[RMDB]
Source information:
This 207-nucleotide RNA was probed chemically with DMS and 2A3. The reactions ran in a buffer of 150 mM KOAc, 10 mM MgCl2 and 150 mM bicine (pH 8.5), at 24 C. For DMS, 11,528 sequencing reads were counted. DMS adducts were read by reverse transcription with MarathonRT. Values are in units of 0.01, from 0 to 300, in steps of 10. For 2A3 the reverse transcriptase was SuperScript II with manganese.
RNA sequence: GGGAACGACUCGAGUAGAGUCGAAAACUGUAAGCCUGACAACGCUAUGGAUUACACUGAUUGAUUUUUGUAUUUUGAGUUAUCCUUGCAUUCUAGAAUUAAGUCUUACUUGAUCAUGGUCUAUAAUUCUGUUUAUAUGCUGCUCAAUUUGGUUUGCCUUUCUAGUUUAGUUCGCUAAACUAGAAAGAAAAGAAACAACAACAACAAC
Reactivity to DMS in 0.01 (KOAc 150mM, MgCl2 10mM, bicine 150mM(pH8.5), 24C), signal-to-noise 4, nucleotides 027 to 156: c060u000g010u000a060a070g030c010c010u010g020a200c070a110a110c130g020c070u000a160u000g020g000a060u000u000a020c040a080c040u020g000a260u000u000g010a070u000u010u000u000u000g020u000a060u010u000u000u010g010a070g000u000u000a080u010c020c040u010u000g040c070a080u000u000c060u010a060g000a040a040u000u010a030a110g010u000c050u000u000a090c090u010u010g010a090u000c070a110u000g000g010u000c030u000a090u000a020a060u000u010c030u020g010u000u000u010a090u000a090u020g030c010u000g010c010u010c080a050a100u010u000u000g010g010u000u000u000g000c120
Reactivity to 2A3 in 0.01 (KOAc 150mM, MgCl2 10mM, bicine 150mM(pH8.5), 24C), signal-to-noise 9, nucleotides 027 to 156: c020u020g030u070a030a020g030c010c030u070g070a080c110a170a050c160g030c080u110a090u130g030g000a030u030u090a040c070a020c090u080g050a130u130u060g050a130u060u100u050u120u140g090u100a120u020u080u030u060g030a030g010u040u080a060u110c040c010u050u070g010c010a010u060u030c040u120a020g010a060a020u030u030a060a010g020u000c020u050u100a130c000u080u120g040a060u130c040a100u130g030g020u000c020u050a210u010a100a040u030u040c010u010g050u010u060u020a130u020a010u080g010c020u010g010c010u020c040a060a080u080u060u040g040g000u040u050u070g030c010